[RMDB]
This 177-nucleotide RNA was probed chemically with DMS and 2A3. For 2A3 the reverse transcriptase was SuperScript II with manganese. The RNA was probed in 150 mM KOAc, 10 mM MgCl2 and 150 mM bicine (pH 8.5) at 24 C.
RNA sequence: GGGAACGACUCGAGUAGAGUCGAAAACGAAGCCGCCAUCGCCGGGAUGCUCUCCGGUAAGCGCACCGUCGUGCCGGGCAUAGUGCCAAAGUUCGUCAGCACCAGCGGCAGAUUCGCUCCGCGCAGCGCAACACAAACGGUUCGCCGUUUGUGUUGCAAAAGAAACAACAACAACAAC
Reactivity to DMS in 0.01 (KOAc 150mM, MgCl2 10mM, bicine 150mM(pH8.5), 24C), signal-to-noise 3, nucleotides 027 to 126: c050g000a100a150g020c060c040g020c030c050a080u010c090g030c020c030g010g020g000a130u030g000c120u000c080u030c030c010g010g010u000a080a100g010c050g020c090a110c030c080g030u000c080g000u000g010c040c020g000g010g020c070a070u010a060g010u000g000c010c040a020a150a090g020u000u000c060g020u010c060a100g010c050a060c040c060a100g010c060g020g000c070a050g000a150u000u010c050g000c050u000c020c080g020c090g000c080a090g010c150
Reactivity to 2A3 in 0.01 (KOAc 150mM, MgCl2 10mM, bicine 150mM(pH8.5), 24C), signal-to-noise 2, nucleotides 027 to 126: c010g030a050a010g040c040c020g000c020c040a080u080c040g000c030c020g040g010g000a030u120g040c010u010c000u000c060c030g000g000u020a080a040g020c010g010c040a100c050c070g060u110c030g040u010g030c000c020g000g000g000c060a100u130a050g060u060g050c010c000a050a110a060g040u090u110c040g100u070c080a010g000c030a030c020c040a010g000c000g020g010c010a010g030a140u080u050c010g010c040u000c000c020g030c030g010c030a040g010c020